Annotation
Chemical mapping of a 177-nucleotide RNA with DMS and 2A3. It was measured as part of the RMDB library TTRDEL.
RNA sequence: GGGAACGACUCGAGUAGAGUCGAAAAAAAAAAGAUAUGGAUCUAGAGAAGGCUUGGAUUUAUGGUGAAACUCGGAAACGAGGAGUAUGCCAUUGUCAGCCUUCGAUUGGAUCCUAAGUCAAAAAAACAUUGUCUCUAUGUUCGCAUAGAGACAAUGAAAAGAAACAACAACAACAAC
Reactivity to DMS in 0.01 (KOAc 150mM, MgCl2 10mM, bicine 150mM(pH8.5), 24C), signal-to-noise 2, nucleotides 027 to 126: a000a030a050a060a020a050g000a040u020a300u010g000g000a010u010c000u000a030g020a300g000a010a000g000g010c000u000u000g010g010a020u000u010u000a000u000g020g000u010g000a140a110a100c000u000c000g010g000a050a040a170c000g010a010g010g000a090g000u000a040u000g000c000c000a000u000u000g010u000c010a030g000c010c000u000u010c000g000a150u000u020g010g000a000u000c000c000u000a010a060g000u030c020a000a000a040a040a090a050a160
Reactivity to 2A3 in 0.01 (KOAc 150mM, MgCl2 10mM, bicine 150mM(pH8.5), 24C), signal-to-noise 2, nucleotides 027 to 126: a020a000a020a020a030a020g040a030u130a080u090g000g010a000u000c040u070a020g000a010g010a110a010g050g010c120u220u260g140g000a060u300u300u190a010u090g000g000u030g000a010a020a030c010u010c020g030g010a150a060a010c000g000a000g010g010a000g020u010a000u280g000c000c010a020u010u010g000u020c000a000g070c000c000u000u010c000g000a000u000u050g000g000a000u000c000c000u010a110a000g030u030c060a110a100a000a000a010a030a070